[RMDB]
RNA sequence: GGGAACGACUCGAGUAGAGUCGAAAAGAUAUGGACACCGUCGAGAGAAUUCGCGAAGAACUAUGUAACAAGUGGUCGGAAACGACCACCGCCCAUAGGGAGCGAACUCUCGACGGUGUCCUAAGUCGAUCAAUGUCUAGUUCGCUAGACAUUGAUCAAAAGAAACAACAACAACAAC
Reactivity to DMS in 0.01 (KOAc 150mM, MgCl2 10mM, bicine 150mM(pH8.5), 24C), signal-to-noise 3, nucleotides 027 to 126: g010a090u010a300u010g040g020a000c000a020c040c000g010u010c000g010a010g010a020g000a150a240u000u000c000g020c000g020a090a140g020a110a290c010u000a010u000g010u000a050a150c150a200a100g000u000g000g000u010c010g010g000a090a090a250c020g030a030c020c000a010c000c050g020c300c170c010a000u000a010g000g000g030a110g020c000g010a020a050c000u000c010u010c020g000a000c030g010g000u010g010u000c000c010u010a010a070g000u010c120